[RMDB]
RNA sequence: GGGAACGACUCGAGUAGAGUCGAAAAUGAUACUAAUCUUAAUAAGUUCAAUAGAGCUAGUUUGCGUCAAAUUUUUGACGUAGCCCCCAUUGAACUCGAAAAUAAAUUCACACCUUUGAGUGUGGAGCAUAUUUCUUAUGUUCGCAUAAGAAAUAUGAAAAGAAACAACAACAACAAC
Reactivity to DMS in 0.01 (KOAc 150mM, MgCl2 10mM, bicine 150mM(pH8.5), 24C), signal-to-noise 5, nucleotides 027 to 126: u010g010a140u000a130c120u000a100a100u010c030u010u010a070a160u010a120a020g000u000u000c010a010a030u000a090g010a110g010c150u010a080g000u010u000u000g010c000g000u000c000a010a050a300u000u000u000u000u000g000a010c000g020u000a030g000c030c060c040c070c080a050u000u000g000a010a010c010u010c140g000a100a040a080a060u010a040a050a160u000u000c000a010c000a010c010c000u010u010u000g010a130g010u000g020u000g010g000a010g010
Reactivity to 2A3 in 0.01 (KOAc 150mM, MgCl2 10mM, bicine 150mM(pH8.5), 24C), signal-to-noise 4, nucleotides 027 to 126: u030g000a020u020a100c050u110a160a120u070c030u070u160a170a120u110a250a060g010u010u010c010a020a020u040a080g040a010g050c010u040a020g090u070u110u120g020c010g000u010c010a030a070a150u230u260u020u030u030g000a000c000g000u000a020g010c010c010c000c010c010a000u000u010g000a010a010c000u010c020g050a030a000a050a040u120a020a050a010u010u020c000a000c000a010c020c000u100u130u180g090a110g040u000g000u000g000g000a000g000
Overview: An RNA of 177 nucleotides, treated with DMS and 2A3 and read out base by base. High 2A3 reactivity points to a flexible backbone, as in loops and unpaired stretches. Reactivities are rounded to 0.1 and cut off at 0 and 3. The reactions ran in a buffer of 150 mM KOAc, 10 mM MgCl2 and 150 mM bicine (pH 8.5), at 24 C.